[RMDB]
RNA sequence: GGGAACGACUCGAGUAGAGUCGAAAAAGUUGCACUUUCCUUAAACAUAUAAGCAUAAUCCGAUGUUGGUGAAGGAAGGCUUCAAGCUCGAAACAUUUUUGUGCACUCAGAUCGGAUUUUGAGGUCAGUAAAAUGAUGACUUCGGUCAUCAUUUUACAAAAGAAACAACAACAACAAC
Reactivity to DMS in 0.01 (KOAc 150mM, MgCl2 10mM, bicine 150mM(pH8.5), 24C), signal-to-noise 3, nucleotides 027 to 126: a050g020u020u030g040c100a080c110u000u000u000c000c010u010u090a080a050a080c200a090u050a130u030a150a050g010c050a050u000a010a010u000c000c000g030a000u000g000u010u000g000g010u000g000a090a140g010g010a100a050g000g030c000u000u000c150a080a100g070c090u000c100g050a130a080a050c060a060u020u010u010u020u010g000u000g000c010a030c020u030c060a040g000a050u000c010g030g000a020u000u000u020u000g000a080g000g000u030c110a080
Reactivity to 2A3 in 0.01 (KOAc 150mM, MgCl2 10mM, bicine 150mM(pH8.5), 24C), signal-to-noise 4, nucleotides 027 to 126: a000g080u090u060g020c060a030c070u020u000u060c030c000u020u060a140a130a020c140a060u190a020u080a260a040g060c020a040u050a090a010u040c000c000g050a020u040g090u300u080g070g020u040g030a050a080g030g040a030a040g050g020c010u090u200c130a150a060g000c010u020c050g130a060a050a040c050a140u080u100u050u050u140g120u140g010c020a000c020u110c010a000g000a090u000c010g000g000a040u000u000u000u030g050a010g000g110u030c030a010